[RMDB]
RNA sequence: GGGAACGACUCGAGUAGAGUCGAAAAGCUCAUUACUUCGGUAAUGAGCAAAUAAAUUCAGCGGUAAAUGCUCCGCAAAUAUUACCGCUGAUGCGGAGCUUAAAACAGCUAGGUUCGCCUAGCUGAACAAUCAAGCUAUCUUCGGAUAGCUUGAUUGAAAAGAAACAACAACAACAAC
Reactivity to 2A3 in 0.01 (KOAc 150mM, MgCl2 10mM, bicine 150mM(pH8.5), 24C), signal-to-noise 3, nucleotides 027 to 126: g000c000u000c010a000u000u000a010c000u030u060c190g060g000u000a000a020u010g000a010g000c000a010a010a000u020a010a020a030u110u060c030a010g000c000g060g040u090a100a110a060u090g010c010u000c060c040g000c020a010a110a000u170a040u080u100a060c010c000g000c030u030g020a000u020g010c020g020g040a040g000c030u050u090a040a050a030a070c000a000g000c010u000a000g050g010u040u040c200g080c040c010u000a000g000c000u000g000a000a010
Reactivity to DMS in 0.01 (KOAc 150mM, MgCl2 10mM, bicine 150mM(pH8.5), 24C), signal-to-noise 3, nucleotides 027 to 126: g010c000u000c000a000u010u000a000c010u000u020c140g030g010u000a000a000u000g010a010g030c000a030a030a030u000a060a070a100u000u000c010a010g010c010g010g010u010a050a030a080u010g010c030u010c070c080g020c020a040a080a070u010a090u000u000a100c000c010g010c020u000g000a040u000g000c060g000g020a040g010c040u000u000a020a070a120a140c020a000g010c000u000a000g010g010u000u010c170g010c000c000u000a000g000c000u010g010a060a080

The record gives the reactivity of an RNA of 177 nucleotides to 2A3 and DMS. 2A3 is a SHAPE reagent: it acylates the 2'-hydroxyl of flexible nucleotides of all four kinds. For DMS, 3,721 sequencing reads were counted. It was measured as part of the RMDB library M2PK50. The reactions ran in a buffer of 150 mM KOAc, 10 mM MgCl2 and 150 mM bicine (pH 8.5), at 24 C.